[RMDB]
RNA sequence: GGGAACGACUCGAGUAGAGUCGAAAAGGAUUUUAUCCGAAUCCUUACGCGCCAGGUUGUCUGCGGAAAUCUGCCAGAGUAAUCUUAGAUAUGGACGAGUUGGUAGGACUCGGCGGGUGGUGUUCACAUAGAAUAGAACUUUCGAGUUCUAUUCUAUAAAAGAAACAACAACAACAAC
Reactivity to DMS in 0.01 (KOAc 150mM, MgCl2 10mM, bicine 150mM(pH8.5), 24C), signal-to-noise 6, nucleotides 027 to 126: g000g010a020u000u010u010u020a100u040c150c120g010a050a030u010c000c000u000u010a080c100g020c070g010c020c030a060g010g010u000u010g010u000c020u000g020c040g000g010a080a110a060u020c040u000g010c070c060a070g010a090g010u020a080a070u000c030u000u010a100g010a100u010a080u020g010g000a060c020g010a080g010u000u010g010g000u000a080g000g000a070c040u000c040g000g000c020g000g000g020u010g000g010u010g000u000u010c050a080c130
Reactivity to 2A3 in 0.01 (KOAc 150mM, MgCl2 10mM, bicine 150mM(pH8.5), 24C), signal-to-noise 5, nucleotides 027 to 126: g010g010a020u070u080u070u150a090u070c020c020g000a000a020u000c000c000u010u080a070c100g010c020g030c050c020a040g020g040u050u040g060u030c020u060g040c030g010g020a050a050a080u010c010u020g020c020c000a030g010a040g100u120a060a070u010c040u060u100a060g050a100u110a130u170g050g050a030c020g010a050g090u060u040g070g040u040a050g000g050a030c010u000c050g040g000c020g000g010g000u020g010g030u040g020u050u030c020a020c000